[RMDB]
RNA sequence: GGGAACGACUCGAGUAGAGUCGAAAAGAUAUGGAUCAUCUUCAACAGCUCGGGACUCGGAAACGAGUUUGAGACAUGAAGGUCCUAAGUCAAAAGUUAGUAAGACGGUUCGCCGUCUUACUAACAACAGAACAGACUACUUCGGUAGUCUGUUCUGAAAAGAAACAACAACAACAAC
Reactivity to DMS in 0.01 (KOAc 150mM, MgCl2 10mM, bicine 150mM(pH8.5), 24C), signal-to-noise 2, nucleotides 027 to 126: g000a070u000a300u010g000g020a030u010c160a130u010c050u000u000c040a020a090c190a170g000c020u000c010g030g020g000a040c000u000c000g010g000a070a110a130c000g010a020g000u000u000u010g000a050g000a060c070a140u000g020a040a030g000g000u000c010c000u010a050a160g010u020c050a050a070a140a100g000u000u000a000g020u010a000a010g010a010c000g020g010u000u020c220g020c010c000g000u010c000u000u000a000c000u000a000a000c000a100a150
Reactivity to 2A3 in 0.01 (KOAc 150mM, MgCl2 10mM, bicine 150mM(pH8.5), 24C), signal-to-noise 1, nucleotides 027 to 126: g040a000u100a030u160g000g000a020u060c040a070u020c160u080u030c050a090a100c050a190g070c010u040c040g170g080g050a030c010u010c030g030g000a060a030a010c000g040a020g000u010u020u040g000a000g000a000c010a070u090g040a020a030g000g010u000c000c010u070a070a040g000u050c040a070a060a030a140g000u020u010a000g000u010a000a010g000a000c000g010g030u040u170c250g080c080c000g000u020c000u000u000a000c000u000a000a010c000a000a000
Chemical mapping of a 177-nucleotide RNA with DMS and 2A3. For 2A3, 2,194 sequencing reads were counted. The DMS profile rests on 1,686 reads. The reactions ran in a buffer of 150 mM KOAc, 10 mM MgCl2 and 150 mM bicine (pH 8.5), at 24 C. Source: RMDB library TTRDEL, as collected in RNAgym.